[RMDB]
RNA sequence: GGGAACGACUCGAGUAGAGUCGAAAAUAAACCUCGGAAGAAACACGGUACCUGUACUCACGAGAAGAUCUCUGAGAUGUUCUUCGUCGCUAGGUACGGCUCGUAGUCCUGAGCGUAGACCAGGAUACAGCAGUUGCGCGAGACCAUGGACAUGGCCGCCCAAGGACAUUUUCGAAUGUCCUUGGGCAAAAGAAACAACAACAACAAC
Reactivity to 2A3 in 0.01 (KOAc 150mM, MgCl2 10mM, bicine 150mM(pH8.5), 24C), signal-to-noise 1, nucleotides 027 to 156: u100a020a060a050c000c000u000c000g090g000a130a110g060a070a240a010c070a010c060g110g060u060a060c020c010u020g000u220a090c040u050c100a020c030g020a030g020a000a000g000a000u000c040u040c110u300g170a030g040a230u120g030u020u010c000u040u060c050g260u080c010g060c050u010a030g000g000u030a030c000g030g000c010u020c120g010u040a010g130u020c010c000u060g030a090g060c070g040u120a050g030a080c000c000a000g040g000a020u060a030c020a000g100c010a020g000u080u010g070c030g000c000g000a010g010a010c020c030a040u090g010g010a030c010a070u000g070g000c000c040

About this RNA:
Chemical mapping of a 207-nucleotide RNA with 2A3. The RNA was probed in 150 mM KOAc, 10 mM MgCl2 and 150 mM bicine (pH 8.5) at 24 C. The 2A3 profile rests on 474 reads. High 2A3 reactivity points to a flexible backbone, as in loops and unpaired stretches.